[RMDB]
RNA sequence: GGGAACGACUCGAGUAGAGUCGAAAAAUUUUAGGGUCUACUACUGGAGGACUAGUCUUAAGACAGUGGGACAAAAGUUCUUGUGAUUUUCACCCCUUAAUCAAUAUGCACAUGUUGACUACCGAUGUGUAAGGCAGUCUAGAGAAGCAGAGAAGAACGGCAUUAAAUACUUCGGUAUUUAAUGCCGAAAAGAAACAACAACAACAAC
Reactivity to DMS in 0.01 (KOAc 150mM, MgCl2 10mM, bicine 150mM(pH8.5), 24C), signal-to-noise 1, nucleotides 027 to 156: a070u010u030u000u020a130g010g010g050u000c020u000a060c020u000a100c030u000g050g010a110g010g000a050c020u000a120g000u010c010u030u000a130a180g050a090c080a080g030u000g000g000g030a130c070a080a040a090a210g020u000u000c020u020u000g080u000g000a120u000u000u010u000c000a040c050c010c010c030u010u000a090a050u010c010a060a070u000a160u000g010c060a080c120a040u000g030u010u010g010a040c010u010a040c020c090g020a060u010g010u000g020u000a050a150g000g030c010a060g010u000c020u000a160g010a100g000a070a100g000c060a080g000a120g000a020a080g000a050a140
Reactivity to 2A3 in 0.01 (KOAc 150mM, MgCl2 10mM, bicine 150mM(pH8.5), 24C), signal-to-noise 3, nucleotides 027 to 156: a000u180u200u090u110a020g030g020g000u040c090u070a060c000u030a070c040u120g040g030a010g010g000a020c010u020a040g000u000c020u070u090a090a020g060a050c030a070g090u070g040g000g000a010c030a020a190a010a010g010u000u070c000u100u050g040u020g030a140u060u030u120u140c020a030c000c020c000c040u070u110a040a050u090c050a020a060u010a060u170g050c000a020c010a040u100g020u100u100g100a030c030u040a030c030c010g060a040u070g010u030g040u100a020a030g020g030c010a000g040u020c050u050a000g030a000g020a150a010g000c060a010g010a000g000a090a000g020a040a010